[RMDB]
RNA sequence: GGGAACGACUCGAGUAGAGUCGAAAAAUGACAACGGUCGGUCCAUUUGACUUUAUCAUUACGAUGGUUCUAGUCGUGUUAUGGUAAAGGUCUGUUGAGUGCAAUUGUAGAGCAAAUUGAUUCAAUUAACACUAAGCGUAUUCGUACGCUUAGUGUUAAAAGAAACAACAACAACAAC
Reactivity to 2A3 in 0.01 (KOAc 150mM, MgCl2 10mM, bicine 150mM(pH8.5), 24C), signal-to-noise 3, nucleotides 027 to 126: a010u200g000a020c010a050a010c050g000g040u050c030g010g010u020c020c010a060u230u080u210g010a010c000u030u030u030a000u010c010a010u000u060a000c030g030a000u020g120g040u220u100c130u230a030g010u010c010g000u030g020u150u190a030u020g000g000u010a010a010a010g050g040u020c040u030g090u050u030g040a090g040u070g020c010a050a050u080u070g060u120a060g010a020g110c040a010a110a090u060u040g030a030u030u060c010a010a050u010u000
Reactivity to DMS in 0.01 (KOAc 150mM, MgCl2 10mM, bicine 150mM(pH8.5), 24C), signal-to-noise 2, nucleotides 027 to 126: a060u010g000a030c040a080a170c170g000g000u010c010g030g000u000c000c020a150u050u000u010g010a100c030u000u000u000a010u000c000a010u000u000a020c030g030a030u010g010g010u040u060c200u020a190g000u010c000g010u000g000u030u000a000u000g000g000u000a010a020a020g010g000u000c030u010g020u000u020g010a130g020u010g010c020a100a050u000u000g020u020a120g000a090g000c070a050a090a120u000u000g000a060u000u000c050a020a240u000u000